Structure probing data (2A3) for a 207-nucleotide construct.
The reactions ran in a buffer of 150 mM KOAc, 10 mM MgCl2 and 150 mM bicine (pH 8.5), at 24 C.
High 2A3 reactivity points to a flexible backbone, as in loops and unpaired stretches.
The 2A3 profile rests on 804 reads.
The data come from the RNA Mapping Database (RMDB), library OK3TST.

[RMDB]
RNA sequence: GGGAACGACUCGAGUAGAGUCGAAAAUCACAUCUUGUUCGUGCUGGAUUGGGCUACGUGGAAGUACAAUCAUCCAGAAGAUGGAGUGAUUCCGAGGAGUAUCCGGUUCCGGUUGAACAAUCUGAUGGUUAAGGCGGUGCAGAAUGAGGACUUGGGAGUACCUGGACUAUUUCGAUAGUCCAGGUACAAAAGAAACAACAACAACAAC
Reactivity to 2A3 in 0.01 (KOAc 150mM, MgCl2 10mM, bicine 150mM(pH8.5), 24C), signal-to-noise 2, nucleotides 027 to 156: u050c020a020c020a160u020c010u050u070g060u010u000c050g130u130g110c000u000g000g030a020u050u050g080g020g000c000u020a050c020g100u160g000g060a050a060g080u140a140c050a020a160u050c020a030u010c020c020a060g020a110a030g050a160u010g030g010a020g080u050g020a060u070u030c010c010g060a110g060g000a060g020u040a140u130c000c000g000g020u070u120c050c000g030g020u040u060g040a030a010c000a000a040u090c100u060g060a040u020g040g000u080u070a020a010g020g030c000g010g000u080g000c000a020g010a080a060u030g010a090g030g040a000c000u020u080g060g070g020a030